This 177-nucleotide RNA was probed chemically with DMS and 2A3. DMS adducts were read by reverse transcription with MarathonRT. Reactivities are given for positions 27 through 126.

RNA sequence: GGGAACGACUCGAGUAGAGUCGAAAAGGAGCUCGAUGCUAGAUGGUUCCAAAACCUUUUGGGAUCACUACUUUACGUUAGUAGAGUAGUGUUAUGAUAAGGUUAUCAUAACAUCUAGCAUCGAGGAGAUAGGAUUCAGAUUCGUUUGAGUUCUAUCAAAAGAAACAACAACAACAAC
Reactivity to DMS in 0.01 (KOAc 150mM, MgCl2 10mM, bicine 150mM(pH8.5), 24C), signal-to-noise 6, nucleotides 027 to 126: g000g010a170g020c000u010c000g020a010u000g000c000u000a000g000a010u010g010g010u000u000c000c000a000a000a060a140c120c110u000u000u000u000g010g000g000a000u000c000a010c000u000a000c000u000u000u000a010c000g020u050u060a090g010u000a000g000a000g010u000a000g010u000g000u000u000a010u000g000a010u010a030a200g020g020u040u000a000u000c000a000u000a010a000c000a000u000c010u000a000g000c000a000u000c000g000a000g000g010a090
Reactivity to 2A3 in 0.01 (KOAc 150mM, MgCl2 10mM, bicine 150mM(pH8.5), 24C), signal-to-noise 9, nucleotides 027 to 126: g120g010a060g030c000u000c000g000a000u000g000c000u000a000g000a000u000g010g000u000u000c000c000a000a000a010a050c040c030u020u010u010u000g000g000g000a000u000c000a000c000u000a000c000u010u000u000a010c010g150u090u220a060g000u010a000g000a000g000u000a000g000u000g000u000u000a000u000g010a000u010a030a060g250g030u120u020a000u000c000a000u000a000a000c000a000u000c000u000a000g000c000a000u000c000g000a000g000g000a000